An RNA of 177 nucleotides, treated with 2A3 and DMS and read out base by base. For 2A3, 4,598 sequencing reads were counted. Values are in units of 0.01, from 0 to 300, in steps of 10. The RNA was probed in 150 mM KOAc, 10 mM MgCl2 and 150 mM bicine (pH 8.5) at 24 C. Values cover nucleotides 27 to 126. It was measured as part of the RMDB library TTRDES.
RNA sequence: GGGAACGACUCGAGUAGAGUCGAAAAGAUAUGGAGAUCAACCGACAUGCUUGGUGGUCGGAAACGACCAAGAGAGCAACAGCGGUUAUCUCCUAAGUCAAAUCCUGGCUUCUUCGGAAGCCAGGAACCUUCUUACCGAGUUCGCUCGGUAAGAAGGAAAAGAAACAACAACAACAAC
Reactivity to 2A3 in 0.01 (KOAc 150mM, MgCl2 10mM, bicine 150mM(pH8.5), 24C), signal-to-noise 3, nucleotides 027 to 126: g000a000u020a030u100g020g000a000g000a000u080c160a000a010c010c010g050a080c110a280u300g000c000u030u040g060g060u040g010g020u090c010g000g000a010a010a000c000g000a010c000c020a030a040g300a000g020a020g100c100a160a110c070a220g050c000g000g000u000u010a000u000c000u000c000c000u010a010a000g000u000c020a130a030a170u070c000c010u000g000g000c000u020u000c010u050u030c280g200g010a010a020g000c000c000a000g000g000a000a000
Reactivity to DMS in 0.01 (KOAc 150mM, MgCl2 10mM, bicine 150mM(pH8.5), 24C), signal-to-noise 2, nucleotides 027 to 126: g000a010u010a180u000g000g010a020g010a040u010c300a000a000c020c000g020a070c100a300u000g020c010u010u010g000g060u000g000g000u000c000g020g010a030a000a060c000g000a010c010c010a020a060g000a280g010a010g030c010a080a110c190a120g020c000g030g010u000u010a020u000c010u000c000c000u000a010a010g000u000c010a090a110a180u000c000c000u010g000g010c000u000u000c000u000u030c260g020g010a010a010g010c000c000a000g010g000a000a010